[RMDB]
RNA sequence: GGGAACGACUCGAGUAGAGUCGAAAAAGAAAUAGCGAUUCUCGAAGGAGAUGAGUCCUUCGAGGAUUGCUAAGCAAAGAUGCAGAACUAUCAAUGAACGACUUUGCUCAUCUUUGUAUACAAAAAACAAUACAUAUACCUUCGGGUAUAUGUAUUGAAAAGAAACAACAACAACAAC
Reactivity to DMS in 0.01 (KOAc 150mM, MgCl2 10mM, bicine 150mM(pH8.5), 24C), signal-to-noise 5, nucleotides 027 to 126: a100g000a080a110a130u000a020g010c000g010a000u000u000c020u000c000g010a020a000g000g010a040g000a180u010g010a190g020u000c000c000u000u000c000g010a010g000g010a010u010u000g020c000u000a000a110g010c010a010a020a020g000a020u000g020c170a030g000a030a080c130u000a090u010c030a090a160u000g010a130a130c180g000a040c080u000u000u000g000c020u000c050a010u000c000u000u000u010g010u010a090u000a050c090a000a040a070a060a030a060
Reactivity to 2A3 in 0.01 (KOAc 150mM, MgCl2 10mM, bicine 150mM(pH8.5), 24C), signal-to-noise 6, nucleotides 027 to 126: a000g090a000a050a030u050a000g000c000g000a000u000u010c010u000c000g000a010a000g020g020a060g070a160u300g080a080g290u010c000c000u000u000c000g000a000g000g000a000u000u000g000c000u000a020a000g000c000a000a000a000g010a010u050g030c100a010g020a120a070c080u090a070u210c040a100a230u250g060a140a030c080g100a060c110u110u120u110g030c010u020c000a010u000c000u030u010u020g040u020a080u050a070c070a020a140a030a000a010a000